[RMDB]
The record gives the reactivity of an RNA of 177 nucleotides to 2A3 and DMS.
The RNA was probed in 150 mM KOAc, 10 mM MgCl2 and 150 mM bicine (pH 8.5) at 24 C.
Reactivities are given for positions 27 through 126.

RNA sequence: GGGAACGACUCGAGUAGAGUCGAAAACAGACUCGAGCGAAAGCUCGGCGAAAGCCGCGUACAUGUGAGCGUCGGCCUGUGUACAGUCGACAGUUACUCUUCGGAGUAACAAUAGAAACAACAACAAGACUAGGGAUACGUUCGCGUAUCCCUAGUCAAAAGAAACAACAACAACAAC
Reactivity to 2A3 in 0.01 (KOAc 150mM, MgCl2 10mM, bicine 150mM(pH8.5), 24C), signal-to-noise 5, nucleotides 027 to 126: c030a030g000a040c020u010c020g000a010g000c020g040a100a020a050g000c010u000c000g000g010c010g010a080a030a020g100c050c010g010c000g030u060a020c030a070u120g100u140g240a140g040c060g080u160c100g140g010c000c000u080g010u020g000u030a040c020a040g000u000c010g040a020c010a030g000u010u000a000c000u010c010u000u090c220g080g000a000g000u000a000a000c000a020a010u140a020g080a050a130a010c040a020a000c010a000a020c010a200a010
Reactivity to DMS in 0.01 (KOAc 150mM, MgCl2 10mM, bicine 150mM(pH8.5), 24C), signal-to-noise 2, nucleotides 027 to 126: c160a220g020a020c010u000c030g000a020g020c000g010a140a200a150g000c000u000c000g030g040c000g030a160a170a070g000c150c000g000c020g000u000a040c000a010u000g000u030g010a170g010c030g020u020c150g000g000c000c000u020g000u000g000u010a010c130a000g000u000c000g000a050c290a070g000u000u000a000c000u000c000u000u050c170g010g010a080g000u000a000a000c000a090a140u060a090g020a130a070a060c130a170a090c180a050a110c120a070a100